[RMDB]
RNA sequence: GGGAACGACUCGAGUAGAGUCGAAAAGCAGCAUCGACGCAGCCCUCUUCGAUAGCCGCACGCAAUGCGGUGGUGAAGACGCCCACACCUAGACUGUCGAUAGACGCAGACGACUGAUCGCCCGCGGUAAUGCUCCAUCAUUCGUGAUGGAGCAUUAAAAAGAAACAACAACAACAAC
Reactivity to 2A3 in 0.01 (KOAc 150mM, MgCl2 10mM, bicine 150mM(pH8.5), 24C), signal-to-noise 5, nucleotides 027 to 126: g050c040a000g010c020a050u080c050g050a050c050g000c040a040g000c000c010c000u020c010u010u020c020g110a110u050a070g000c010c020g020c010a050c080g160c080a030a090u160g000c010g000g020u010g010g030u130g040a060a020g010a020c050g040c000c010c000a040c010a040c020c000u020a050g070a170c040u050g020u050c020g070a080u050a120g040a030c060g000c050a010g020a050c050g030a030c020u050g020a050u040c020g020c010c010c010g030c030g030g010
Reactivity to DMS in 0.01 (KOAc 150mM, MgCl2 10mM, bicine 150mM(pH8.5), 24C), signal-to-noise 5, nucleotides 027 to 126: g030c050a080g000c080a060u010c060g000a060c100g010c060a150g000c030c040c030u000c010u010u000c030g010a090u020a250g010c020c010g010c040a090c130g010c240a100a190u000g010c000g000g000u000g000g040u010g000a030a060g000a090c180g010c020c010c030a070c050a050c050c060u010a100g030a090c040u010g000u000c010g000a090u010a090g000a070c060g000c030a090g010a070c050g000a090c040u000g010a090u000c060g000c000c010c010g010c040g020g010